RNA sequence: GGGAACGACUCGAGUAGAGUCGAAAAACUAAAGAUAAAGACUAUACAGUGAAGUGGUUCAAGAAACGUCGUGCAACUACAGCUGAGGCAAUUGCUCGCCAUGGUGCAGCUCGUGCUAUUACUGAAGGAUCAGUACUUGGUUCGCCAAGUACUGAUCAAAAGAAACAACAACAACAAC
Reactivity to DMS in 0.01 (KOAc 150mM, MgCl2 10mM, bicine 150mM(pH8.5), 24C), signal-to-noise 2, nucleotides 027 to 126: a160c090u000a070a050a100g000a140u040a020a140a070g000a020c030u000a130u010a130c090a050g010u010g000a060a050g020u000g000g000u010u010c020a120a090g000a070a090a090c130g050u000c030g020u010g000c050a020a090c030u000a050c140a070g000c030u000g000a060g010g010c020a070a120u000u000g000c020u000c100g020c030c020a110u000g040g030u010g010c020a060g000c030u000c080g020u000g000c060u000a070u010u000a030c100u000g000a130a080g010
Reactivity to 2A3 in 0.01 (KOAc 150mM, MgCl2 10mM, bicine 150mM(pH8.5), 24C), signal-to-noise 2, nucleotides 027 to 126: a000c060u120a160a120a030g090a050u220a160a150a010g010a010c010u040a040u090a260c030a010g050u030g170a150a000g030u040g120g010u030u040c060a120a020g080a100a130a050c140g040u070c040g060u070g000c030a050a020c020u050a020c040a020g010c040u040g040a050g060g000c030a030a260u230u080g030c030u020c080g020c010c020a090u150g080g020u110g000c000a010g000c000u000c020g040u050g020c020u040a040u230u040a090c080u090g080a180a030g090